The record gives the reactivity of an RNA of 207 nucleotides to DMS. DMS adducts were read by reverse transcription with MarathonRT. The DMS profile rests on 2,483 reads. Conditions: 150 mM KOAc, 10 mM MgCl2 and 150 mM bicine (pH 8.5), 24 C.
RNA sequence: GGGAACGACUCGAGUAGAGUCGAAAAGCUCCGAUUCGUCGGAGCACACACCGUAGGGCAGUGGAGAGCGCGGUAGCGAAGAACUUCGAAAGAGGGGAGCUACCUGAAUGCUCGAUGAAACUGCCCUAAACGGCAAUCGGCUUGCUUCGGCAAGCAAAAUAUGUUGCCGAUUCGUCGGCAACAUAUUAAAAGAAACAACAACAACAAC
Reactivity to DMS in 0.01 (KOAc 150mM, MgCl2 10mM, bicine 150mM(pH8.5), 24C), signal-to-noise 2, nucleotides 027 to 156: g040c000u000c020c000g040a020u000u000c260g060u000c000g040g020a020g040c000a030c050a100c090a080c020c010g000u000a000g000g010g010c020a050g000u000g020g000a120g020a010g050c010g030c300g020g010u000a010g030c000g000a070a130g000a090a210c000u000u000c000g030a230a130a270g020a080g000g000g000g010a300g000c000u010a010c000c030u000g030a010a120u000g000c030u000c010g000a130u000g010a130a250a040c000u000g000c010c000c000u000a000a010a030c000g000g010c030a050a130u000c210g010g030c010u000u000g000c030u000u000c300g060g000c030a040a010g000c010a010a030